[RMDB]
RNA sequence: GGGAACGACUCGAGUAGAGUCGAAAAGUCGCCGAAACAGAAGCAGCACUCGCUUGAGUAGUAGCAGUAGAAGCACUACCUGAAGCAGAGGUAGCACUGUUAGCUGCAUUCGUUUCUGAUGUAGCAGCAUUACCCUCACUUACUGCAGCAGCAGAGGAGUACACUAGACCUUCGGGUCUAGUGUACUAAAAGAAACAACAACAACAAC
Reactivity to 2A3 in 0.01 (KOAc 150mM, MgCl2 10mM, bicine 150mM(pH8.5), 24C), signal-to-noise 4, nucleotides 027 to 156: g100u120c070g040c130c050g070a040a060a010c050a030g060a180a020g040c120a010g000c010a020c020u000c020g030c020u040u110g040a000g040u040a010g000u140a040g000c020a050g080u300a040g130a260a010g000c020a000c020u000a000c000c040u070g090a030a000g000c060a040g040a000g050g030u240a050g000c020a000c040u000g010u030u010a010g000c000u000g010c000a020u040u020c040g040u030u040u030c030u030g010a010u000g000u020a010g000c000a000g020c020a030u030u210a150c000c030c000u040c040a040c060u090u230a050c010u030g080c010a150g000c010a050g010c020a000g080a030g070g060
Reactivity to DMS in 0.01 (KOAc 150mM, MgCl2 10mM, bicine 150mM(pH8.5), 24C), signal-to-noise 1, nucleotides 027 to 156: g030u020c070g140c010c030g020a190a130a240c040a120g000a040a160g080c040a060g040c000a090c010u000c030g010c070u000u010g010a010g000u000a080g000u000a080g020c030a070g030u000a060g000a190a160g010c020a090c000u010a000c000c030u000g020a060a010g030c030a100g010a020g020g000u000a090g000c020a040c070u010g000u010u000a160g060c000u000g030c000a080u000u010c070g030u000u000u010c020u020g010a070u010g030u000a090g010c050a050g030c060a120u010u000a030c010c020c060u000c000a170c110u000u010a080c010u000g000c020a220g030c040a100g000c020a110g020a080g070g000
Notes
This 207-nucleotide RNA was probed chemically with 2A3 and DMS. For 2A3, 2,267 sequencing reads were counted. For 2A3 the reverse transcriptase was SuperScript II with manganese. It was measured as part of the RMDB library OK3TST. The reactions ran in a buffer of 150 mM KOAc, 10 mM MgCl2 and 150 mM bicine (pH 8.5), at 24 C. Values cover nucleotides 27 to 156.